[RMDB]
RNA sequence: GGGAACGACUCGAGUAGAGUCGAAAAGAACGUUGGAAGGCGCUUCGGUAUGAGCGUGUGAGCGGAAUUCUUUCAUACCAAGAACGGGAUAACCGGAAGGAGUUGGCGGACGGAUGUGGCCGAGAAAGGGAUAUUCUUUCUUCGGAAAGAAUAUCCCAAAAGAAACAACAACAACAAC
Reactivity to DMS in 0.01 (KOAc 150mM, MgCl2 10mM, bicine 150mM(pH8.5), 24C), signal-to-noise 3, nucleotides 027 to 126: g030a100a060c130g000u000u000g010g020a060a070g000g010c050g000c020u000u000c080g000g000u010a010u000g000a040g040c070g070u000g030u000g000a080g000c050g010g010a070a050u030u020c050u000u010u000c040a060u030a030c060c030a150a070g000a080a130c080g000g000g000a120u080a060a020c140c020g000g010a070a100g010g000a090g000u000u040g030g020c020g010g000a080c080g030g010a010u000g030u000g030g010c000c030g000a100g000a090a070a070
Reactivity to 2A3 in 0.01 (KOAc 150mM, MgCl2 10mM, bicine 150mM(pH8.5), 24C), signal-to-noise 3, nucleotides 027 to 126: g050a040a010c090g010u000u010g040g010a080a040g060g000c010g010c030u050u060c070g040g000u060a020u080g010a020g040c030g010u080g020u070g090a030g020c060g010g100a090a100u120u040c030u020u150u040c050a060u030a060c000c020a010a000g040a080a050c090g030g020g010a140u070a210a120c010c030g050g030a020a000g030g050a060g000u080u060g080g030c000g020g000a020c020g010g000a020u070g040u070g080g070c030c030g010a020g000a030a070a060
This 177-nucleotide RNA was probed chemically with DMS and 2A3. Values cover nucleotides 27 to 126. For DMS the reverse transcriptase was MarathonRT. For 2A3 the reverse transcriptase was SuperScript II with manganese. Reactivities are rounded to 0.1 and cut off at 0 and 3. 2A3 is a SHAPE reagent: it acylates the 2'-hydroxyl of flexible nucleotides of all four kinds.